RNA sequence: GGGAACGACUCGAGUAGAGUCGAAAAAUGUUGAGCGCCAGGUUACGGCCCAUCACCGCCAUACCGACAACGCCAAUCUGUUGUUUGGACAUUAAAAAACUCCUGUCUGAGAGAUGACACCUGUUACUGUUGGUAUUAUAUUCGUAUAAUACCAACAAAAAGAAACAACAACAACAAC
Reactivity to DMS in 0.01 (KOAc 150mM, MgCl2 10mM, bicine 150mM(pH8.5), 24C), signal-to-noise 4, nucleotides 027 to 126: a090u000g020u000u000g010a110g020c060g000c040c070a070g000g010u010u010a110c100g000g000c030c050c080a080u000c060a110c050c050g000c040c050a110u000a080c040c030g010a050c100a060a060c060g020c060c080a040a090u010c120u000g030u000u000g000u000u000u000g020g010a070c080a050u010u020a000a040a070a070a050a090c100u000c020c030u000g010u000c030u010g000a160g000a150g010a120u010g000a040c040a070c060c030u000g000u010u000a090c180
Reactivity to 2A3 in 0.01 (KOAc 150mM, MgCl2 10mM, bicine 150mM(pH8.5), 24C), signal-to-noise 3, nucleotides 027 to 126: a000u110g010u030u030g050a040g020c030g030c050c050a030g110g000u100u110a090c100g040g000c030c020c010a050u060c020a010c030c030g030c030c000a020u030a080c010c010g030a020c010a030a000c020g020c030c050a040a090u060c080u070g050u010u010g000u040u060u070g020g000a040c030a080u200u240a090a070a050a030a010a010c030u040c000c010u040g020u000c020u030g090a100g000a040g010a090u140g010a030c010a030c030c040u080g050u150u080a120c080